The record gives the reactivity of an RNA of 177 nucleotides to DMS. The DMS profile rests on 457 reads.
RNA sequence: GGGAACGACUCGAGUAGAGUCGAAAAUUCCCUCUUUAACACCAGGCCCACCCCGCUCACAGCGACGGGCCAGGCUUUCGGGAACCCCGGUACAGGCAGGCCGGGACUUCCCUCUUUAAUACCCGGCGAUAAGCUCAUACUUCGGUAUGAGCUUAUCAAAAGAAACAACAACAACAAC
Reactivity to DMS in 0.01 (KOAc 150mM, MgCl2 10mM, bicine 150mM(pH8.5), 24C), signal-to-noise 1, nucleotides 027 to 126: u010u000c010c010c010u030c200u000u000u030a100a120c210a150c040c050a040g030g000c040c000c030a120c210c300c050c010g000c020u000c240a110c300a130g000c020g000a020c050g010g000g020c020c010a020g010g000c150u010u030u000c260g020g000g000a010a110c200c020c010c000g000g100u000a130c040a120g040g040c080a070g000g000c010c040g000g000g030a000c050u000u000c020c030c010u000c060u000u000u020a070a110u080a230c100c010c020g030g000c190